RNA sequence: GGGAACGACUCGAGUAGAGUCGAAAAGAAUCAUGAGAAAUGAGGUCGCCCUCUUGAGGAAGCAAUCCUACCAGGCUAAUCAGAUUCAUGACGCAAGAUUGUCGGCUGUCCUCAGCUCAAUGCAUGACCUCGGAGAUGGAUUCGUCCAUCUCCGAGGAAAAGAAACAACAACAACAAC
Reactivity to DMS in 0.01 (KOAc 150mM, MgCl2 10mM, bicine 150mM(pH8.5), 24C), signal-to-noise 2, nucleotides 027 to 126: g000a120a070u000c010a080u010g000a100g020a050a150a090u010g020a040g000g010u000c110g020c020c020c060u000c050u000u030g000a050g010g010a190a050g000c130a070a060u000c020c040u010a120c100c070a120g010g000c020u000a060a150u000c110a060g000a080u000u000c070a090u000g010a210c110g000c100a050a040g000a060u000u000g020u000c120g030g010c020u000g000u000c000c010u000c020a010g010c090u000c100a030a030u000g000c110a130u000g000a070
Reactivity to 2A3 in 0.01 (KOAc 150mM, MgCl2 10mM, bicine 150mM(pH8.5), 24C), signal-to-noise 2, nucleotides 027 to 126: g110a010a060u060c030a020u060g000a020g050a070a300a200u090g000a010g000g070u050c000g020c020c030c000u000c040u050u100g030a040g060g020a020a050g000c060a050a120u080c000c010u030a110c050c050a060g160g000c020u090a150a000u050c000a020g040a110u150u050c050a110u160g110a040c070g000c030a000a050g010a090u090u070g100u100c050g040g020c050u100g040u050c000c000u000c020a000g000c010u040c030a120a150u050g030c040a080u080g080a030

Source: RMDB library OK2TRN, as collected in RNAgym.
Structure probing data (DMS and 2A3) for a 177-nucleotide construct.
The reactions ran in a buffer of 150 mM KOAc, 10 mM MgCl2 and 150 mM bicine (pH 8.5), at 24 C.
For 2A3, 1,277 sequencing reads were counted.